[RMDB]
RNA sequence: GGGAACGACUCGAGUAGAGUCGAAAACAUAGCGUUUCACAAUGUGCGCCCUUAACAUUGUUUAUGCAAGCACGUUUCGCAAUGUACGGCGCAGAAACAUUGCCAACACAAAUACGCUUCACGAUGUAAAACAUCGGUGCGUUCGCGCACCGAUGAACGAACGAUUCUAGUUCGCUAGAAUCGUUCGAAAAGAAACAACAACAACAAC
Reactivity to 2A3 in 0.01 (KOAc 150mM, MgCl2 10mM, bicine 150mM(pH8.5), 24C), signal-to-noise 4, nucleotides 027 to 156: c030a060u160a010g010c010g000u000u070u130c090a030c000a040a020u020g030u010g000c010g010c030c010c000u090u160a060a030c020a020u020u020g130u080u130u190a110u140g060c090a090a130g060c070a030c130g020u040u110u100c030g010c020a010a000u010g000u010a010c030g040g000c010g000c020a020g040a000a110a000c010a010u010u010g060c040c050a130a010c040a020c030a140a140a020u130a030c030g020c010u080u140c100a060c110g130a080u120g050u250a050a090a100a020c000a010u010c010g000g000u000g000c010g010u020u050c180g000c030g000c020a000c020c010g000a000u010g000a010a000
Reactivity to DMS in 0.01 (KOAc 150mM, MgCl2 10mM, bicine 150mM(pH8.5), 24C), signal-to-noise 1, nucleotides 027 to 156: c050a110u000a050g020c010g010u000u010u020c060a090c040a070a100u010g020u000g020c000g040c010c010c110u010u020a240a100c020a060u000u000g000u000u000u000a010u010g050c010a100a110g010c130a110c090g040u010u000u000c170g000c010a030a050u000g000u000a070c040g000g000c020g000c010a090g000a080a080a100c010a040u030u010g050c010c050a020a020c020a010c040a040a120a130u000a060c020g000c020u000u010c050a080c090g040a190u000g020u000a040a090a100a250c000a010u000c010g000g020u000g010c000g000u000u010c250g070c020g030c010a020c000c010g010a000u000g000a020a100